RNA sequence: GGGAACGACUCGAGUAGAGUCGAAAAAGGUACUCCGCAAGCUGGCAGUCCCACACCAUACCGCCGCCGUCGAUGAACUCGAUCCAUGCCUGCCGAUUGAGCGGGCCUUGGCAGAGGGCAUGCAGGACAGGCGGGCUUUAUUCGUAAAGCCCGCCUGAAAAGAAACAACAACAACAAC
Reactivity to 2A3 in 0.01 (KOAc 150mM, MgCl2 10mM, bicine 150mM(pH8.5), 24C), signal-to-noise 1, nucleotides 027 to 126: a000g030g000u030a010c000u010c000c000g070c010a000a050g030c030u100g010g000c050a010g060u150c050c060c000a000c040a000c030c000a110u230a110c030c010g000c030c000g000c000c010g070u060c000g030a040u110g100a070a000c010u000c000g030a020u030c030c000a030u120g010c000c000u000g040c000c010g160a300u210u230g030a070g000c030g000g000g000c000c000u090u010g030g000c020a030g010a030g040g100g000c010a060u240g000c000a010g020g010a100
Notes:
Source: RMDB library OK1LIB, as collected in RNAgym. Chemical mapping of a 177-nucleotide RNA with 2A3. 2A3 adducts were read by reverse transcription with SuperScript II with manganese. Reactivities are given for positions 27 through 126.